Chemical mapping of a 207-nucleotide RNA with DMS and 2A3.
As a SHAPE reagent, 2A3 marks flexible, mostly unpaired nucleotides at the ribose 2'-OH.
Source: RMDB library M2RFPK, as collected in RNAgym.
DMS adducts were read by reverse transcription with MarathonRT.
[RMDB]
RNA sequence: GGGAACGACUCGAGUAGAGUCGAAAAACUUUGAUGGCGGUACUAUGACUUGAUGCAAGGUGUGGAGCGACCUUAAACAGUUCUGGUGGUGCUCUGAAUGGAGUGCUCUACUGAGAUUAUAAAAUAGCAUGCAUAGAGUGCUUCGGCACUCUAUGAACAUUAAAUGGUCCUUCGGGACCAUUUAAUGAAAAGAAACAACAACAACAAC
Reactivity to DMS in 0.01 (KOAc 150mM, MgCl2 10mM, bicine 150mM(pH8.5), 24C), signal-to-noise 1, nucleotides 027 to 156: a070c020u020u000u000g020a100u000g000g020c050g000g010u000a080c040u000a080u000g010a050c000u000u000g000a150u000g010c090a090a060g010g010u000g040u000g010g000a150g020c050g000a110c030c010u000u000a100a070a090c090a080g020u000u000c030u010g040g050u020g010g010u010g000c020u010c020u020g000a110a100u000g010g010a080g000u000g000c060u000c010u000a060c040u000g000a110g010a090u010u000a100u020a050a030a060a120u000a090g000c070a090u000g000c000a020u000a000g000a070g000u000g010c000u000u000c290g070g030c000a020c010u010c000u010a000u000g010a040a100
Reactivity to 2A3 in 0.01 (KOAc 150mM, MgCl2 10mM, bicine 150mM(pH8.5), 24C), signal-to-noise 4, nucleotides 027 to 156: a000c030u110u070u170g040a050u100g020g000c020g030g050u040a030c050u050a060u140g020a040c000u040u040g040a050u080g050c020a030a010g020g000u010g010u040g020g000a010g010c010g020a050c000c010u080u080a100a130a060c030a070g010u060u030c030u050g030g000u020g010g040u020g000c010u000c020u070g110a070a060u200g030g010a030g000u030g010c010u020c010u050a040c040u060g030a010g010a080u080u100a050u200a130a080a030a080u150a020g070c070a050u100g010c000a000u010a000g000a000g000u000g000c000u010u020c040g050g010c010a000c000u010c000u000a000u000g000a000a000